[RMDB]
RNA sequence: GGGAACGACUCGAGUAGAGUCGAAAAGGAGCAAGCCCAUAGCGAUAGGGGGAGAUGCUGGGAGUUAGAGGAGACCUUAGGGGAGACCGAAGCGAGGAGGAAAGCAAAGAAAGCAACGGGGCUAGCCAAGCACUGCUGUUCGCAGCAGUGAAAAGAAACAACAACAACAAC
Reactivity to DMS in 0.01 (KOAc 150mM, MgCl2 10mM, bicine 150mM(pH8.5), 24C), signal-to-noise 9, nucleotides 027 to 129: g050g000a060g020c100a130a100g020c000c000c000a100u000a100g040c020g000a080u050a060g000g000g000g000g010a000g000a040u050g040c050u040g000g030g030a060g010u000u000a080g020a000g000g010a080g020a050c090c050u010u020a090g020g010g000g010a090g010a070c040c030g020a070a030g000c090g000a030g030g020a050g030g020a060a030a050g040c180a050a070a080g030a060a050a040g040c050a070a090c120g000g000g000g000c050u020a040g030c070c080a070a120g000
Reactivity to 2A3 in 0.01 (KOAc 150mM, MgCl2 10mM, bicine 150mM(pH8.5), 24C), signal-to-noise 6, nucleotides 027 to 129: g080g000a060g030c040a060a020g020c000c010c010a070u100a020g070c050g080a090u160a120g010g010g000g020g000a030g000a010u100g030c050u070g000g030g020a050g030u070u070a040g010a010g030g000a010g010a010c000c000u020u070a050g000g010g000g000a020g010a000c000c020g010a020a000g030c030g020a010g010g000a000g010g010a040a020a000g020c050a050a050a030g070a060a040a010g040c030a020a040c060g020g000g000g000c010u010a010g000c010c010a030a010g050